The record gives the reactivity of an RNA of 177 nucleotides to 2A3 and DMS. For 2A3 the reverse transcriptase was SuperScript II with manganese. The 2A3 profile rests on 1,642 reads. Source: RMDB library OK2TST, as collected in RNAgym. The reactions ran in a buffer of 150 mM KOAc, 10 mM MgCl2 and 150 mM bicine (pH 8.5), at 24 C. DMS adducts were read by reverse transcription with MarathonRT. High 2A3 reactivity points to a flexible backbone, as in loops and unpaired stretches.
RNA sequence: GGGAACGACUCGAGUAGAGUCGAAAACAUAGUUAUUUUUACCAAUAUCAAUUUCACCUAUUUGGUUAUAUCUGACUGUAACCAUUCCCCAUGAUAAGAUACCAGUAAAGAUAUAGAGAAUGGAAGAGUUGUAAGAGCAAUUCGUUGCUCUUACAACAAAAGAAACAACAACAACAAC
Reactivity to 2A3 in 0.01 (KOAc 150mM, MgCl2 10mM, bicine 150mM(pH8.5), 24C), signal-to-noise 2, nucleotides 027 to 126: c020a030u170a100g060u050u060a120u070u060u030u050u060a030c000c000a050a050u030a020u080c010a030a080u000u070u080c040a040c010c010u120a120u060u040u020g020g000u050u000a030u000a000u040c210u090g150a080c060u060g000u040a040a010c000c010a020u030u040c020c000c000c000a030u050g030a010u030a040a070g020a010u030a060c000c040a020g010u010a000a090a000g010a000u030a010u050a070g090a030g100a140a070u140g070g050a060a030g070a020
Reactivity to DMS in 0.01 (KOAc 150mM, MgCl2 10mM, bicine 150mM(pH8.5), 24C), signal-to-noise 2, nucleotides 027 to 126: c030a080u000a120g010u020u000a010u000u000u020u000u000a040c040c010a070a170u000a030u000c030a050a150u000u020u000c010a050c090c100u000a130u000u000u010g000g000u000u000a020u000a000u000c130u010g010a060c270u000g030u010a010a030c020c010a060u000u000c020c000c010c090a290u010g000a040u000a060a200g000a030u000a050c170c060a090g000u000a010a000a000g000a010u000a030u010a080g000a130g000a100a050u030g010g010a090a080g000a140